[RMDB]
Record summary: The record gives the reactivity of an RNA of 177 nucleotides to 2A3 and DMS.

RNA sequence: GGGAACGACUCGAGUAGAGUCGAAAAGGCGGUGAAGUCGCCGUCGCGCGGGCCGCGGCCGCCCGGGGUACUGUGAUGGGAUUGUCCUCGUUUGCCAGCAAGCCGAUCGAGGAGGUCAUUGCCGCCAUAAUAUUAUGCGGUUCGCCGCAUAAUAUUAAAAAGAAACAACAACAACAAC
Reactivity to 2A3 in 0.01 (KOAc 150mM, MgCl2 10mM, bicine 150mM(pH8.5), 24C), signal-to-noise 3, nucleotides 027 to 126: g010g000c030g040g000u060g090a180a050g060u050c040g010c140c020g010u020c000g000c010g060c040g020g030g000c010c030g150c150g130g030c150c060g010c040c000c000g030g040g010g010u090a030c030u120g040u040g040a030u060g030g100g030a030u050u090g210u210c000c000u000c000g010u010u060u030g030c010c010a090g060c080a180a040g030c040c010g030a020u110c030g000a020g010g000a020g000g020u050c020a060u020u140g000c000c010g000c000c000a000
Reactivity to DMS in 0.01 (KOAc 150mM, MgCl2 10mM, bicine 150mM(pH8.5), 24C), signal-to-noise 6, nucleotides 027 to 126: g010g030c010g000g020u000g010a090a160g020u000c050g010c000c020g010u000c040g010c070g010c130g010g010g000c020c080g020c070g010g010c130c150g010c110c010c000g020g000g020g020u000a030c050u010g010u000g000a040u000g000g010g000a040u000u010g000u000c000c010u000c010g000u000u010u000g000c060c050a160g010c220a110a120g010c160c040g000a020u010c010g010a030g000g010a180g000g000u000c040a220u000u000g000c000c000g000c010c030a160
For 2A3, 3,569 sequencing reads were counted. The RNA was probed in 150 mM KOAc, 10 mM MgCl2 and 150 mM bicine (pH 8.5) at 24 C. DMS adducts were read by reverse transcription with MarathonRT.